This 207-nucleotide RNA was probed chemically with DMS and 2A3. The DMS profile rests on 14,367 reads. 2A3 adducts were read by reverse transcription with SuperScript II with manganese. Source: RMDB library M2RFPK, as collected in RNAgym. The reactions ran in a buffer of 150 mM KOAc, 10 mM MgCl2 and 150 mM bicine (pH 8.5), at 24 C. For 2A3, 5,066 sequencing reads were counted.
RNA sequence: GGGAACGACUCGAGUAGAGUCGAAAAAAUGGCACUGCAGAGCUGAUGGGCCAUGUACCUAUCCAAAAUGAGAUCCCAUCUUGCACACUGUGCUAAUUUGAGAUUCUCAUGCCUUCUACUUGGAGAGACCGCAUGCCCAGCUUCGGCUGGGCAUGAAUAUGCUAUAUCAAUUCGUUGAUAUAGCAUAAAAAGAAACAACAACAACAAC
Reactivity to DMS in 0.01 (KOAc 150mM, MgCl2 10mM, bicine 150mM(pH8.5), 24C), signal-to-noise 4, nucleotides 027 to 156: a070a040u000g010g030c030a130c030u000g000c040a140g020a140g020c050u010g000a030u010g020g020g030c040c040a090u000g030u000a080c050c020u000a090u000c050c110a040a080a140a080u000g000a060g000a080u000c000c000c000a040u000c070u000u000g010c000a070c020a180c130u010g020u000g010c010u010a030a050u000u000u000g000a090g010a080u000u010c020u000c020a020u000g010c050c040u010u000c030u000a070c050u000u000g010g010a090g000a170g010a180c030c040g010c000a010u000g010c010c000c000a010g010c000u000u010c300g050g000c000u020g010g000g000c000a000u000g000a030a140
Reactivity to 2A3 in 0.01 (KOAc 150mM, MgCl2 10mM, bicine 150mM(pH8.5), 24C), signal-to-noise 5, nucleotides 027 to 156: a000a000u080g010g000c050a040c070u080g010c090a050g010a030g130c050u050g020a060u050g010g010g010c020c010a020u060g040u060a080c030c020u060a130u160c080c050a090a070a020a050u050g020a070g020a120u070c000c000c000a000u000c010u030u100g000c010a030c010a030c100u140g010u010g000c000u040a020a120u010u010u020g060a070g010a060u200u030c020u000c020a020u100g040c010c010u090u070c020u070a100c020u040u050g050g010a030g010a000g030a040c020c080g000c030a000u000g000c010c010c000a010g000c010u030u030c190g070g000c020u000g000g010g030c000a000u000g000a000a000